An RNA of 177 nucleotides, treated with DMS and 2A3 and read out base by base. For 2A3 the reverse transcriptase was SuperScript II with manganese. Reactivities are given for positions 27 through 126.

RNA sequence: GGGAACGACUCGAGUAGAGUCGAAAAAAUGGGAACAUGGAGGAAAGCCUAUCCUGUUUGUUUCCUCCUCCAGAAACAGAGGUGGAAGCUUGGUCCGGUGUUUCCCAAUGCCUCCCAUUCCUAUUGUUCUCUGAUAUCUUUUCGAAGAUAUCAGAGAAAAAGAAACAACAACAACAAC
Reactivity to DMS in 0.01 (KOAc 150mM, MgCl2 10mM, bicine 150mM(pH8.5), 24C), signal-to-noise 3, nucleotides 027 to 126: a000a000u000g020g000g000a140a180c020a020u000g010g030a130g010g000a030a010a120g000c010c010u000a120u030c020c010u000g020u000u020u010g010u000u000u010c010c010u000c010c000u000c000c110a140g030a140a100a160c300a090g000a010g010g000u000g010g000a040a010g000c010u010u010g010g000u010c230c230g000g000u000g010u000u000u010c000c000c050a220a020u010g000c130c060u000c000c000c000a020u000u000c010c000u000a110u020u040g010u000
Reactivity to 2A3 in 0.01 (KOAc 150mM, MgCl2 10mM, bicine 150mM(pH8.5), 24C), signal-to-noise 9, nucleotides 027 to 126: a000a000u020g000g000g000a040a010c010a010u040g070g040a140g120g010a110a000a000g020c000c010u030a070u090c010c000u040g110u130u210u100g010u010u020u000c000c000u000c010c000u000c010c030a090g210a110a120a050c060a020g000a000g010g010u020g010g000a010a010g000c020u050u040g010g010u060c060c030g000g010u090g230u010u020u020c000c000c010a000a010u010g010c000c060u010c010c000c000a000u010u010c000c000u040a130u040u220g080u020